[RMDB]
RNA sequence: GGGAACGACUCGAGUAGAGUCGAAAAAGCGAGUACACGCAGUAUACUGCCACUUGUGUGAGAAUACUUUUAGUACAAGCGAGUACACGCUCUAUACUGCCACUUGUGUGAGAAUACUUUUAGUACAAAUCAUGCCACCAUUCGUGGUGGCAUGAUUAAAAGAAACAACAACAACAAC
Reactivity to DMS in 0.01 (KOAc 150mM, MgCl2 10mM, bicine 150mM(pH8.5), 24C), signal-to-noise 2, nucleotides 027 to 126: a030g040c010g060a090g020u000a010c040a090c240g000c020a060g000u010a090u000a000c010u030g040c040c030a010c030u010u010g000u080g000u000g010a010g010a080a060u020a060c090u060u000u000u000a160g040u040a040c080a070a220g040c000g000a150g010u000a040c070a120c060g000c010u000c060u000a030u010a170c070u090g040c010c060a060c040u020u010g090u060g000u010g000a150g010a220a050u000a040c060u000u000u040u000a050g040u010a010c140a090
Reactivity to 2A3 in 0.01 (KOAc 150mM, MgCl2 10mM, bicine 150mM(pH8.5), 24C), signal-to-noise 2, nucleotides 027 to 126: a000g020c080g000a000g120u110a020c020a020c090g010c000a000g010u000a000u010a060c010u100g100c040c040a000c000u110u000g060u110g110u200g130a110g060a170a040u200a220c120u050u140u090u210a150g000u020a070c080a050a010g000c030g080a000g000u080a010c080a010c030g050c000u000c000u000a000u000a010c060u080g010c020c010a020c030u040u060g020u000g000u010g040a000g000a090a100u110a190c020u040u080u030u080a020g000u050a070c070a000
Description:
The record gives the reactivity of an RNA of 177 nucleotides to DMS and 2A3. The 2A3 profile rests on 583 reads. The RNA was probed in 150 mM KOAc, 10 mM MgCl2 and 150 mM bicine (pH 8.5) at 24 C. 2A3 is a SHAPE reagent: it acylates the 2'-hydroxyl of flexible nucleotides of all four kinds.